An RNA of 177 nucleotides, treated with DMS and 2A3 and read out base by base. The 2A3 profile rests on 5,938 reads. Source: RMDB library TTRDEL, as collected in RNAgym.
RNA sequence: GGGAACGACUCGAGUAGAGUCGAAAAGAUAUGGAGAGGCCUUGGAGCAUCCUUAUCGGAAACGAUAAGAGUGCUAUGAAGAGGCUACCCACCUCCUAAGUCAAAGUUUGUUCUUCGGAACAAACAAUCGAGUAGUAAGGUUCGCCUUACUACUCGAAAAAGAAACAACAACAACAAC
Reactivity to DMS in 0.01 (KOAc 150mM, MgCl2 10mM, bicine 150mM(pH8.5), 24C), signal-to-noise 3, nucleotides 027 to 126: g010a050u000a010u020g000g010a020g030a250g010g010c000c000u020u000g000g000a010g020c000a000u010c020c000u000u000a010u000c000g000g000a040a010a050c000g010a000u000a020a010g000a040g030u000g000c000u000a180u010g000a140a170g000a010g000g010c000u000a050c200c160c070a200c200c000u000c000c000u010a020a100g000u000c030a110a110a110g010u000u000u000g020u000u000c000u000u010c170g020g010a010a010c000a010a000a000c000a090a100
Reactivity to 2A3 in 0.01 (KOAc 150mM, MgCl2 10mM, bicine 150mM(pH8.5), 24C), signal-to-noise 2, nucleotides 027 to 126: g000a010u010a000u030g000g010a030g010a050g050g000c010c020u010u000g020g000a010g000c000a010u020c010c000u000u000a010u010c000g000g020a010a000a000c000g000a010u010a000a020g060a010g040u010g000c000u100a300u200g000a010a000g000a010g020g000c000u040a040c020c010c010a280c030c000u010c000c000u010a010a000g020u030c060a150a100a090g000u000u010u000g010u000u000c000u040u070c300g140g000a010a010c000a020a010a010c000a010a120